[RMDB]
RNA sequence: GGGAACGACUCGAGUAGAGUCGAAAACUUGCAAAGGCUGAGUUAUGCUGUUCUGCACGCAUGGUUUGGAGAGAGUGGUGCAAUGUCUGUGGCAUAAAAGAUGUUGUUCUACAAGGCUUAAAAGCUUAUACUACUUGGUUCGCCAAGUAGAAAAGAAACAACAACAACAAC
Reactivity to 2A3 in 0.01 (KOAc 150mM, MgCl2 10mM, bicine 150mM(pH8.5), 24C), signal-to-noise 9, nucleotides 027 to 129: c020u030u120g030c050a090a070a060g050g000c030u100g030a030g160u160u070a070u180g030c030u030g090u160u090c050u110g030c020a010c050g070c030a060u110g140g030u080u060u060g060g000a100g010a000g000a000g020u020g000g000u030g000c000a000a010u020g040u040c120u080g010u080g000g000c010a000u070a080a130a010a010g050a050u080g000u000u000g010u000u000c000u010a070c030a100a030g020g000c010u080u110a040a150a030a020g000c010u040u040a070u040a110
Reactivity to DMS in 0.01 (KOAc 150mM, MgCl2 10mM, bicine 150mM(pH8.5), 24C), signal-to-noise 9, nucleotides 027 to 129: c040u020u050g000c100a070a070a070g010g040c000u010g050a100g020u000u000a090u030g010c040u030g030u040u040c120u010g000c090a050c090g040c050a050u010g060g000u020u000u030g020g010a180g020a110g000a060g000u000g000g000u040g030c030a000a000u000g000u030c060u020g040u020g020g040c000a030u040a030a060a060a040g030a050u050g010u000u000g020u000u000c040u030a110c090a120a110g000g000c020u010u010a100a080a100a070g000c000u000u000a090u000a160
The record gives the reactivity of an RNA of 170 nucleotides to 2A3 and DMS. The 2A3 profile rests on 36,943 reads. Reactivities are rounded to 0.1 and cut off at 0 and 3. Conditions: 150 mM KOAc, 10 mM MgCl2 and 150 mM bicine (pH 8.5), 24 C. Values cover nucleotides 27 to 129.